[RMDB]
RNA sequence: GGGAACGACUCGAGUAGAGUCGAAAAGAAUAGUCAGUAUAUGAGUGUACUCGCAUGAGAAUGUGAGUAUUAUGACCAACUGACUACGGUAUGUAUCGUCAUUACUCAUAUACACUAAGAUGCAUACGGUAGUGUAUCAUUUCGAUGGUACGCUACCAAAAGAAACAACAACAACAAC
Reactivity to DMS in 0.01 (KOAc 150mM, MgCl2 10mM, bicine 150mM(pH8.5), 24C), signal-to-noise 9, nucleotides 027 to 126: g020a140a120u010a020g000u010c060a060g010u000a030u010a030u000g010a090g010u000g010u000a000c000u000c000g020c000a010u000g000a220g000a150a010u000g020u000g000a010g010u000a000u010u030a030u010g000a120c130c160a090a070c040u000g000a030c030u010a040c160g010g010u000a020u010g010u000a010u010c090g010u010c110a050u020u020a050c060u010c050a040u010a030u010a050c140a120c140u020a070a080g000a040u000g000c050a030u000a030c060
Reactivity to 2A3 in 0.01 (KOAc 150mM, MgCl2 10mM, bicine 150mM(pH8.5), 24C), signal-to-noise 9, nucleotides 027 to 126: g060a020a030u050a030g040u050c070a010g010u020a030u010a020u100g020a010g010u030g010u010a000c000u000c000g000c000a000u020g030a020g060a210a010u000g010u000g000a000g000u000a000u020u020a010u020g050a020c010c020a030a030c020u050g050a030c020u040a060c070g070g010u030a030u060g020u010a050u050c030g050u020c060a060u040u110a040c010u020c030a020u050a010u020a050c060a010c070u050a040a030g030a040u050g020c020a020u030a040c020